RNA sequence: GGGAACGACUCGAGUAGAGUCGAAAAUGCUUGCCAUAUGCAUCUCAGGCACUGAAGUUGUUUGCUCCUACCCGGCUGGAGAGUGUUGUCAUCCUGAGCACAGCCAUCUACAAGACUUAUCUAGCUACCUAUAGCUUAACUUCGGUUAAGCUAUAGGAAAAGAAACAACAACAACAAC
Reactivity to DMS in 0.01 (KOAc 150mM, MgCl2 10mM, bicine 150mM(pH8.5), 24C), signal-to-noise 3, nucleotides 027 to 126: u000g010c010u000u000g000c070c050a100u000a040u000g000c020a050u020c020u000c030a090g000g000c040a050c150u010g000a100a150g000u000u000g010u000u000u010g000c080u010c020c010u000a090c010c050c060g000g040c040u000g000g000a080g000a030g000u010g000u000u010g020u020c080a060u000c000c010u020g000a060g000c080a060c070a070g000c040c050a040u000c050u000a120c090a090a070g010a070c070u010u020a110u000c050u030a070g000c060u060a150
Reactivity to 2A3 in 0.01 (KOAc 150mM, MgCl2 10mM, bicine 150mM(pH8.5), 24C), signal-to-noise 4, nucleotides 027 to 126: u120g010c020u080u090g020c020c010a050u070a070u280g040c030a150u030c000u020c060a030g070g080c040a030c080u080g020a160a060g050u090u080g030u030u100u080g030c000u030c000c000u000a090c000c000c000g050g000c030u040g010g020a070g020a030g050u110g050u110u130g000u030c020a060u050c010c020u020g030a030g010c040a020c010a040g050c020c020a070u050c010u060a040c030a160a040g060a120c040u110u090a110u190c040u120a030g100c000u060a060
Chemical mapping of a 177-nucleotide RNA with DMS and 2A3. For 2A3, 1,893 sequencing reads were counted. Values cover nucleotides 27 to 126.